Source information
Structure probing data (2A3 and DMS) for a 177-nucleotide construct. For DMS the reverse transcriptase was MarathonRT. DMS (dimethyl sulfate) methylates the pairing face of unpaired adenines and cytosines. The RNA was probed in 150 mM KOAc, 10 mM MgCl2 and 150 mM bicine (pH 8.5) at 24 C. Reactivities are given for positions 27 through 126.
[RMDB]
RNA sequence: GGGAACGACUCGAGUAGAGUCGAAAAGCCAGGGAGUGUACGGCAGGGGCGAGGCUAAGGAGUGAAACUCCGAAGCCGGAGGGAAACCGACAGCCCGCAGCUUAUGCGAGGGGCGGGGUGUGCUCGCUCAGCUCGACACAUUCGUGUGUCGAGCUGAAAAAGAAACAACAACAACAAC
Reactivity to 2A3 in 0.01 (KOAc 150mM, MgCl2 10mM, bicine 150mM(pH8.5), 24C), signal-to-noise 1, nucleotides 027 to 126: g000c000c000a000g000g050g000a130g080u040g020u120a010c000g010g050c010a030g000g000g040g010c060g090a070g010g000c000u030a040a000g000g010a000g000u170g070a020a140a190c000u030c000c000g000a060a000g050c010c000g010g010a040g030g020g020a030a040a040c020c010g080a070c040a020g000c000c000c000g000c040a000g060c000u140u170a020u230g010c010g000a000g020g000g000g020c000g040g010g000g000u180g010u020g030c030u000c010g090c070
Reactivity to DMS in 0.01 (KOAc 150mM, MgCl2 10mM, bicine 150mM(pH8.5), 24C), signal-to-noise 2, nucleotides 027 to 126: g030c040c040a190g020g040g000a060g010u040g030u010a100c070g000g080c070a130g030g000g000g010c010g000a230g000g030c000u000a040a240g000g010a050g000u100g020a180a160a300c000u000c020c000g000a300a030g000c000c000g000g000a190g000g000g000a160a060a070c080c040g020a100c150a090g010c030c000c010g000c060a080g000c030u010u000a150u010g000c010g000a090g010g000g000g000c010g020g010g000g020u000g000u030g020c060u000c000g010c210